[RMDB]
RNA sequence: GGGAACGACUCGAGUAGAGUCGAAAAUUGCAAGCCUUCGGGCUUGCAAGGUGACGGAAUGCGGAAUAUAUAAUCCUCCGCUUAAGGAUUAUACCGACUUAAGUGCCAGGCUGUUCGCAGCCUGGAAUGUCCCUAUACUGUUCGCAGUAUAGGGACAAAAAGAAACAACAACAACAAC
Reactivity to DMS in 0.01 (KOAc 150mM, MgCl2 10mM, bicine 150mM(pH8.5), 24C), signal-to-noise 3, nucleotides 027 to 126: u000u000g010c000a000a000g000c000c000u000u010c300g030g000g010c000u000u000g000c000a000a020g010g010u010g000a080c070g000g000a140a150u010g000c000g010g000a190a080u000a240u000a020u000a020a020u000c000c010u000c220c170g020c240u000u010a090a030g020g000a020u000u000a020u000a040c050c020g000a030c050u010u000a300a140g000u000g000c000c000a010g010g020c010u000g000u020u020c220g010c000a010g030c000c000u000g020g010a010a020
Reactivity to 2A3 in 0.01 (KOAc 150mM, MgCl2 10mM, bicine 150mM(pH8.5), 24C), signal-to-noise 2, nucleotides 027 to 126: u040u000g010c000a030a000g000c010c010u060u120c290g020g020g030c000u000u020g000c010a010a000g040g040u090g060a010c010g020g120a060a050u190g040c000g050g060a150a030u200a000u010a000u010a170a000u040c000c010u000c000c040g140c130u030u150a050a000g000g000a010u050u000a040u020a010c010c030g000a030c060u120u190a050a040g050u030g090c000c000a000g010g000c000u000g020u070u080c230g030c090a000g000c030c010u000g000g020a020a010
The record gives the reactivity of an RNA of 177 nucleotides to DMS and 2A3. For DMS, 2,402 sequencing reads were counted. For 2A3, 1,283 sequencing reads were counted. For 2A3 the reverse transcriptase was SuperScript II with manganese. Conditions: 150 mM KOAc, 10 mM MgCl2 and 150 mM bicine (pH 8.5), 24 C. DMS adducts were read by reverse transcription with MarathonRT.